The record gives the reactivity of an RNA of 177 nucleotides to DMS and 2A3. DMS adducts were read by reverse transcription with MarathonRT. Source: RMDB library TTRDES, as collected in RNAgym.

RNA sequence: GGGAACGACUCGAGUAGAGUCGAAAAGAUAUGGAGUUUAUCGGAGGGUCAAUCGGAAACGAUUGGGAGCCCGCGAAACGAUUGACUCCUAAGUCAAAAGUCGCAUUUCGUUCGCGAAAUGCGACAACGUCCUUACACAGUUCGCUGUGUAAGGACGAAAAGAAACAACAACAACAAC
Reactivity to DMS in 0.01 (KOAc 150mM, MgCl2 10mM, bicine 150mM(pH8.5), 24C), signal-to-noise 1, nucleotides 027 to 126: g010a030u000a030u020g000g000a020g000u000u000u000a010u010c020g010g000a030g030g040g000u000c000a000a000u000c000g000g000a000a000a060c010g000a010u000u010g020g020g040a300g010c000c010c010g060c300g000a090a160a170c010g000a010u000u000g000a010c000u000c000c000u010a000a050g000u000c000a150a090a110a110g010u000c010g070c000a030u000u000u000c000g000u010u000c300g010c000g020a000a000a020u000g020c000g010a020c010a000a020
Reactivity to 2A3 in 0.01 (KOAc 150mM, MgCl2 10mM, bicine 150mM(pH8.5), 24C), signal-to-noise 1, nucleotides 027 to 126: g030a000u030a000u070g040g000a030g000u000u050u040a020u030c050g050g000a120g150g030g030u300c040a010a000u000c000g000g000a000a000a030c040g000a000u010u060g020g090g080a120g120c030c100c050g040c040g140a100a080a000c020g000a000u010u030g000a000c000u000c000c000u010a000a020g000u000c000a000a000a070a240g020u040c000g000c010a000u000u030u000c050g050u050u060c210g020c040g160a000a060a000u020g000c000g040a000c000a030a000

For DMS, 1,195 sequencing reads were counted. For 2A3 the reverse transcriptase was SuperScript II with manganese. Conditions: 150 mM KOAc, 10 mM MgCl2 and 150 mM bicine (pH 8.5), 24 C.